An RNA of 177 nucleotides, treated with DMS and 2A3 and read out base by base.
RNA sequence: GGGAACGACUCGAGUAGAGUCGAAAAGAGGGGGAGGAGAAGUUCUCCCUUCCCUUUGAAGGCCACCACUCCCCAGCGUGCUCCGGAGAUGCGCGAGACGAGCAUGAGGGCGAUCUCCUUGGCCACAGGAGGACUAUAAAUUCGUUUAUAGUCCUCCAAAAGAAACAACAACAACAAC
Reactivity to DMS in 0.01 (KOAc 150mM, MgCl2 10mM, bicine 150mM(pH8.5), 24C), signal-to-noise 7, nucleotides 027 to 126: g000a030g000g000g010g010g010a030g010g010a040g010a120a210g000u010u000c020u000c020c010c000u000u000c000c000c000u000u000u000g010a130a120g010g010c030c010a080c120c060a150c110u000c010c020c010c050a100g010c100g020u000g010c020u000c050c100g010g010a140g010a080u000g010c060g000c040g000a130g010a250c230g000a070g010c040a040u000g000a180g000g000g000c110g000a050u000c050u000c040c030u000u000g010g010c050c010a080c200a100
Reactivity to 2A3 in 0.01 (KOAc 150mM, MgCl2 10mM, bicine 150mM(pH8.5), 24C), signal-to-noise 4, nucleotides 027 to 126: g060a020g000g010g040g030g010a010g010g030a080g020a130a110g230u190u030c020u040c000c020c000u020u030c000c010c010u010u010u040g020a040a020g020g010c020c000a020c000c020a040c070u020c010c000c000c010a030g080c030g050u050g010c010u020c040c020g090g020a080g030a070u240g100c080g010c040g080a070g030a060c050g010a010g030c020a020u070g020a080g050g010g000c090g010a040u050c020u010c050c000u010u040g020g000c010c000a030c000a020
The reactions ran in a buffer of 150 mM KOAc, 10 mM MgCl2 and 150 mM bicine (pH 8.5), at 24 C.
It was measured as part of the RMDB library OK2TRN.
The 2A3 profile rests on 6,946 reads.
The DMS profile rests on 7,919 reads.